[RMDB]
RNA sequence: GGGAACGACUCGAGUAGAGUCGAAAAAAGCAUGCCGGGGAAUGGUGGUUUACCCCGAUAUCAAAUGAUUACCGACCAAUAAUUGGCGAAACUCGUUUCGCGUUGGCUGCCUAAUUCAAGGAAUUAGAAUAGCUCUCCGGGUUCGCCCGGAGAGCAACGAUACUUGUUAGUUCGCUAACAAGUAUCGAAAAGAAACAACAACAACAAC
Reactivity to 2A3 in 0.01 (KOAc 150mM, MgCl2 10mM, bicine 150mM(pH8.5), 24C), signal-to-noise 2, nucleotides 027 to 156: a010a000g090c040a020u070g030c050c020g000g000g000g000a020a040u050g030g030u030g010g030u050u050u130a090c010c000c000c010g000a000u010a010u030c030a030a010a080u090g020a040u060u080a020c000c020g030a090c010c070a030a040u150a110a050u120u140g060g000c010g000a030a030a040c080u070c090g080u010u030u030c020g000c020g020u040u030g020g010c050u040g040c010c010u020a030a030u050u050c090a150a050g070g020a050a040u020u020a050g020a160a100u050a060g010c000u010c000u000c000c000g000g030g020u040u060c150g040c030c010c000g000g010a000g000a000g000c000a000a000
Reactivity to DMS in 0.01 (KOAc 150mM, MgCl2 10mM, bicine 150mM(pH8.5), 24C), signal-to-noise 1, nucleotides 027 to 156: a050a050g020c060a020u000g040c020c030g020g000g010g000a060a130u000g000g010u010g030g010u020u000u000a210c010c000c000c030g010a070u010a090u010c180a090a060a120u000g010a120u010u020a050c050c040g010a060c050c180a090a150u010a070a170u010u000g030g050c000g010a070a020a050c090u000c110g030u010u000u000c020g000c070g000u010u000g000g010c020u000g000c070c020u000a040a080u010u000c050a080a150g040g010a150a040u000u000a040g000a050a110u010a120g010c010u000c020u000c000c010g000g020g010u000u010c300g000c000c030c000g000g010a020g000a000g000c000a000a000

The record gives the reactivity of an RNA of 207 nucleotides to 2A3 and DMS.
For DMS, 2,430 sequencing reads were counted.
The reactions ran in a buffer of 150 mM KOAc, 10 mM MgCl2 and 150 mM bicine (pH 8.5), at 24 C.
Source: RMDB library M2RFPK, as collected in RNAgym.
For DMS the reverse transcriptase was MarathonRT.
Reactivities are rounded to 0.1 and cut off at 0 and 3.